RNA sequence: GGGAACGACUCGAGUAGAGUCGAAAAUUGGCUAACACGAAAUCGGCAACCUUUCCCUCCGACUUUCGCAAGGUUGUCCUGUUGUCAGCUAUACGCCUGAUCAAAUUAGGUGAUUGCACACUGCGCCACAACCUUUGGUUUUCGAACCAAAGGUUGUAAAAGAAACAACAACAACAAC
Reactivity to DMS in 0.01 (KOAc 150mM, MgCl2 10mM, bicine 150mM(pH8.5), 24C), signal-to-noise 3, nucleotides 027 to 126: u000u000g010g000c020u000a070a020c080a050c060g000a060a090a070u040c230g010g000c040a020a030c030c030u000u000u000c010c000c010u000c110c030g000a080c150u000u000u000c060g040c150a050a060g000g000u000u030g010u010c010c070u040g030u010u010g020u010c040a020g000c000u010a080u000a080c070g010c000c020u000g020a060u000c120a040a050a300u010u000a040g020g030u000g010a080u010u000g000c080a060c060a100c080u000g020c050g030c020c120
Reactivity to 2A3 in 0.01 (KOAc 150mM, MgCl2 10mM, bicine 150mM(pH8.5), 24C), signal-to-noise 1, nucleotides 027 to 126: u080u040g000g010c010u030a070a020c040a010c140g100a070a060a130u210c020g010g000c000a000a020c000c000u010u070u030c050c000c000u040c050c050g080a080c070u150u260u160c120g010c080a040a000g030g000u000u000g010u040c000c020u180g070u300u030g020u080c050a000g040c000u040a020u060a120c020g000c000c000u020g010a070u120c110a110a170a110u060u040a040g000g020u010g060a080u050u130g020c080a040c000a000c020u100g020c040g000c050c030